[RMDB]
RNA sequence: GGGAACGACUCGAGUAGAGUCGAAAACCAGAUGACGGUCCUGCCAUGAGACCGCAACGAGAGCAUGUCGCAUCGAAUGGACUCAGGGAGUCGGCAGCUUGCCCCACGGAUGAGCGCCUAAUGCCGGAAGAGACGUGCAACUUCGGUUGCACGUCAAGUAUGAUAGUACCUUCGGGUACUAUCAUACAAAAGAAACAACAACAACAAC
Reactivity to DMS in 0.01 (KOAc 150mM, MgCl2 10mM, bicine 150mM(pH8.5), 24C), signal-to-noise 2, nucleotides 027 to 156: c020c030a140g000a140u000g020a040c040g010g010u010c030c020u000g020c070c110a140u010g010a070g000a020c020c060g000c020a060a100c080g010a080g000a160g010c060a040u010g020u000c060g000c020a100u000c010g020a100a300u010g010g000a060c060u000c050a080g020g010g000a110g010u010c030g010g000c020a070g000c040u000u000g000c000c020c020c040a140c090g010g010a070u010g010a080g030c030g000c020c000u000a040a050u000g040c010c000g000g000a130a130g020a160g010a020c000g000u000g000c000a000a010c000u000u010c250g040g020u000u010g010c010a000c010g000u000c000a000a090
Reactivity to 2A3 in 0.01 (KOAc 150mM, MgCl2 10mM, bicine 150mM(pH8.5), 24C), signal-to-noise 5, nucleotides 027 to 156: c010c000a030g040a190u130g040a040c030g000g020u040c010c020u060g120c080c020a090u110g010a040g030a090c030c030g000c020a050a060c040g080a030g000a030g090c080a120u150g060u140c060g000c030a030u050c030g060a070a060u090g020g040a030c050u020c110a060g030g020g040a040g050u060c020g020g000c020a030g020c010u060u100g050c020c020c000c010a080c040g060g010a140u100g010a030g020c030g020c000c010u090a120a040u150g000c010c000g050g020a080a050g070a030g000a070c000g000u000g000c000a000a000c000u020u030c100g110g000u000u000g000c000a020c010g000u000c000a000a000
About this RNA: Chemical mapping of a 207-nucleotide RNA with DMS and 2A3. The reactions ran in a buffer of 150 mM KOAc, 10 mM MgCl2 and 150 mM bicine (pH 8.5), at 24 C. The 2A3 profile rests on 4,548 reads.